Chemical mapping of a 177-nucleotide RNA with DMS and 2A3. It was measured as part of the RMDB library OK1LIB. The reactions ran in a buffer of 150 mM KOAc, 10 mM MgCl2 and 150 mM bicine (pH 8.5), at 24 C. DMS adducts were read by reverse transcription with MarathonRT.
[RMDB]
RNA sequence: GGGAACGACUCGAGUAGAGUCGAAAAGAGGUGGUCCCGAAGUGUGCCGCUGAUCGCGGGAGUCACUGGCGGCGGCAGCGGGGGCACAGCGGUGGACCCGGGUGCUCCGACCGGAAUCGGCGACGCGAUGAGCAACAGAAUUCGUUCUGUUGCUCAUAAAAGAAACAACAACAACAAC
Reactivity to DMS in 0.01 (KOAc 150mM, MgCl2 10mM, bicine 150mM(pH8.5), 24C), signal-to-noise 6, nucleotides 027 to 126: g020a100g010g020u010g000g010u000c010c010c010g010a060a080g010u010g010u000g020c020c000g010c000u010g010a050u020c090g010c050g010g000g010a170g010u020c090a100c080u020g010g010c030g000g010c060g000g010c010a040g000c020g010g010g000g000g000c000a010c010a060g000c030g000g020u030g010g010a200c080c000c010g010g000g000u010g000c030u000c010c000g010a130c020c010g000g010a100a080u020c050g010g010c060g000a070c060g020c090g010
Reactivity to 2A3 in 0.01 (KOAc 150mM, MgCl2 10mM, bicine 150mM(pH8.5), 24C), signal-to-noise 9, nucleotides 027 to 126: g130a020g040g060u100g010g090u020c000c000c000g010a070a040g080u110g030u050g050c000c000g000c020u040g030a170u070c050g010c030g070g100g050a040g060u070c040a020c180u060g060g010c050g020g000c000g000g000c000a010g040c010g010g010g000g050g000c010a000c010a020g170c060g080g020u150g090g030a030c000c010c010g010g010g040u050g000c010u000c010c020g100a110c000c030g020g070a080a070u090c030g010g010c030g020a020c020g010c010g040